An RNA of 207 nucleotides, treated with DMS and 2A3 and read out base by base. Conditions: 150 mM KOAc, 10 mM MgCl2 and 150 mM bicine (pH 8.5), 24 C. The 2A3 profile rests on 8,157 reads. For DMS, 7,572 sequencing reads were counted.
[RMDB]
RNA sequence: GGGAACGACUCGAGUAGAGUCGAAAAGAGGGUUGGCUCCGUCAUCAACACAUUUCGGUUAAAUAUAACUGACAAAUCAAACAAUAAUUUCGCAGUAGCUGCGUAAUAGCCACUGCAUCGCCUAACAGCAUCUCCUACGUGCUGUUAACGCGAUUCAACUACAGAGUAACUUCGGUUACUCUGUAGUAAAAGAAACAACAACAACAAC
Reactivity to DMS in 0.01 (KOAc 150mM, MgCl2 10mM, bicine 150mM(pH8.5), 24C), signal-to-noise 3, nucleotides 027 to 156: g000a080g030g020g010u000u000g000g040c010u000c050c020g000u010c030a110u010c080a070a120c050a110c050a130u000u000u000c030g030g020u000u000a050a120a200u000a130u000a030a060c000u010g000a160c110a040a080a100u000c100a090a090a110c100a070a160u000a050a100u000u000u000c020g020c000a010g030u010a010g020c000u000g030c170g000u010a100a110u000a050g040c010c010a030c030u000g010c000a070u010c000g000c000c060u000a030a020c010a020g010c000a030u010c110u000c100c070u000a120c150g010u000g020c010u000g000u000u000a020a040c060g000c000g020a050u000u000c060a170
Reactivity to 2A3 in 0.01 (KOAc 150mM, MgCl2 10mM, bicine 150mM(pH8.5), 24C), signal-to-noise 9, nucleotides 027 to 156: g060a020g020g040g000u080u050g020g020c020u020c050c020g110u030c020a090u080c030a050a090c050a020c040a160u070u110u110c040g010g040u050u050a070a210a080u240a130u050a130a060c020u030g040a030c050a040a100a050u180c070a070a030a130c070a070a080u200a160a130u060u180u200c060g000c000a000g010u070a030g030c050u060g010c040g070u080a030a060u090a160g000c000c010a020c010u020g000c010a000u000c000g000c000c000u000a000a000c000a000g010c000a010u010c060u090c090c060u050a050c070g000u000g000c000u000g000u010u000a020a020c000g000c000g020a010u060u050c020a010